[RMDB]
RNA sequence: GGGAACGACUCGAGUAGAGUCGAAAACACGGUGGCGGGCACCUAUAAUCCCAGCUACUGUGGAGGCUGAGGCAGGAGAAUCUCUUGAACCCAGAAGGCAGAGGUUGCAGUGAGCUGAGAUCGCACCACACUAAUCAGUUUUCGAACUGAUUAGUGUAAAAGAAACAACAACAACAAC
Reactivity to DMS in 0.01 (KOAc 150mM, MgCl2 10mM, bicine 150mM(pH8.5), 24C), signal-to-noise 9, nucleotides 027 to 126: c040a040c050g020g020u000g010g010c020g010g010g020c300a060c090c090u010a090u010a130a110u010c010c000c010a100g020c010u000a020c020u010g020u000g010g010a080g010g020c040u000g000a070g000g010c040a050g010g000a070g010a090a070u000c030u010c030u000u000g010a060a110c050c020c030a080g010a110a070g010g010c050a040g000a070g000g000u000u000g000c050a050g010u000g000a060g020c040u010g000a080g000a070u000c070g010c080a120c080c090
Reactivity to 2A3 in 0.01 (KOAc 150mM, MgCl2 10mM, bicine 150mM(pH8.5), 24C), signal-to-noise 4, nucleotides 027 to 126: c020a010c020g030g000u030g020g010c060g030g030g000c100a060c050c050u100a090u110a150a040u080c010c000c010a020g010c010u030a010c010u010g030u040g020g050a040g050g000c040u040g020a030g040g000c020a020g020g060a050g020a080a130u020c040u000c000u080u060g060a070a070c010c000c020a040g050a080a030g040g000c050a020g020a020g080g010u070u070g010c010a030g030u030g130a030g010c020u030g020a030g010a120u060c030g010c030a020c030c000